Source: RMDB libraries RFM100 and RFMREP, as collected in RNAgym. Chemical mapping of a 177-nucleotide RNA with DMS and 2A3. The RNA was probed in 150 mM KOAc, 10 mM MgCl2 and 150 mM bicine (pH 8.5) at 24 C. DMS adducts were read by reverse transcription with MarathonRT.
RNA sequence: GGGAACGACUCGAGUAGAGUCGAAAAAGACCGUGCUUACGAGCACGGUCAAGAUUUAGUCGUAGGACGCGACUAAGUAAAAUAAAAGAAAAGUCCACUGAGAAGAUGCACGCUACGGCGUGCAUCACUGACCUACGUAAUUCGUUACGUAGGUCAGAAAAGAAACAACAACAACAAC
Reactivity to DMS in 0.01 (KOAc 150mM, MgCl2 10mM, bicine 150mM(pH8.5), 24C), signal-to-noise 2, nucleotides 027 to 126: a110g000a000c000c010g050u000g010c000u000u010a070c120g010a030g000c000a000c000g000g070u000c000a010a010g000a190u020u000u000a010g010u020c020g000u000a150g000g010a000c010g000c000g000a010c000u000a000a010g000u050a010a030a010a010u010a040a040a020a030g020a000a020a050a220g010u010c010c000a280c240u020g000a080g020a170a070g000a020u010g030c020a010c010g000c000u000a190c160g010g000c060g030u000g000c000a000u000c000a020
Reactivity to 2A3 in 0.01 (KOAc 150mM, MgCl2 10mM, bicine 150mM(pH8.5), 24C), signal-to-noise 5, nucleotides 027 to 126: a000g000a000c000c000g010u010g020c010u120u040a120c300g120a010g000c000a000c000g000g000u010c000a000a000g000a000u010u020u010a000g000u000c000g000u020a090g000g010a000c010g000c000g010a010c010u000a010a000g080u070a030a060a030a130u200a020a050a020a000g250a010a070a020a010g000u000c020c020a030c160u200g070a110g010a230a040g000a020u000g000c000a000c000g000c000u030a020c270g080g000c000g000u000g000c000a000u000c000a000